[RMDB]
RNA sequence: GGGAACGACUCGAGUAGAGUCGAAAACAGCAUAGGCGCCCAGCCAUUAGACGGCAAUGUAGCAUUAGUCGUCGACAUUGAUAUGUGGCGGCAUUAUCCCAGCCUUGGCGCACCUUCCUACUGGCGGGACGUCGAUAAGUGCGCCUCGUGAGUGGACAGAUACGACGCAUUUCGAUGCGUCGUAUCUAAAAGAAACAACAACAACAAC
Reactivity to 2A3 in 0.01 (KOAc 150mM, MgCl2 10mM, bicine 150mM(pH8.5), 24C), signal-to-noise 3, nucleotides 027 to 156: c030a000g080c080a070u120a180g040g020c000g000c020c050c010a030g030c000c020a010u060u130a020g000a020c040g020g000c020a010a010u030g100u190a210g080c070a030u000u040a030g000u000c010g000u030c020g030a040c020a060u170u300g130a080u180a080u290g020u020g010g020c010g010g000c000a000u080u070a050u230c020c000c000a030g020c020c000u040u050g000g030c000g000c020a030c000c010u070u060c010c000u070a150c020u090g080g000c020g060g020g040a010c000g080u100c010g030a050u020a300a040g020u020g160c000g020c070c000u000c000g030u110g050a070g010u020g000g060a020c020

Chemical mapping of a 207-nucleotide RNA with 2A3. Conditions: 150 mM KOAc, 10 mM MgCl2 and 150 mM bicine (pH 8.5), 24 C. The data come from the RNA Mapping Database (RMDB), library OK3TST.